[RMDB]
The data come from the RNA Mapping Database (RMDB), library OK2TST. Chemical mapping of a 177-nucleotide RNA with DMS and 2A3. For DMS the reverse transcriptase was MarathonRT. 2A3 adducts were read by reverse transcription with SuperScript II with manganese.
RNA sequence: GGGAACGACUCGAGUAGAGUCGAAAACGCGCCAAGAAUGGACUCAAGGCCCUGACUGAUAUACUCAUGUAGAUGCAUCGCAAAUGCGGUAGGAGUGACACCCUGGCCUUUGCGAAUAAACAAUGGAUCACCAGGAUACUUUCGAGUAUCCUGGUGAAAAAGAAACAACAACAACAAC
Reactivity to DMS in 0.01 (KOAc 150mM, MgCl2 10mM, bicine 150mM(pH8.5), 24C), signal-to-noise 3, nucleotides 027 to 126: c120g000c160g020c020c050a100a100g010a120a070u040g010g000a070c060u030c070a040a200g010g010c010c000c030u010g000a090c070u010g000a110u000a100u000a060c050u000c080a050u010g030u010a070g000a070u000g000c090a170u000c030g000c020a010a020a030u010g010c060g000g020u010a030g020g000a080g000u000g030a150c180a150c170c020c010u000g030g000c000c010u000u000u020g000c010g000a060a130u000a080a060a070c090a040a080u000g010g010a270
Reactivity to 2A3 in 0.01 (KOAc 150mM, MgCl2 10mM, bicine 150mM(pH8.5), 24C), signal-to-noise 2, nucleotides 027 to 126: c010g090c030g010c030c000a070a000g090a080a100u110g080g040a110c010u000c090a050a040g020g000c000c030c000u080g060a050c030u030g080a000u090a010u020a170c030u050c050a040u080g010u090a030g020a180u100g050c050a050u020c030g000c000a050a040a010u090g020c050g010g100u060a010g000g040a030g010u090g020a000c000a020c040c000c010u050g050g010c000c010u000u030u010g020c000g040a020a010u170a130a060a010c060a060a050u110g000g050a020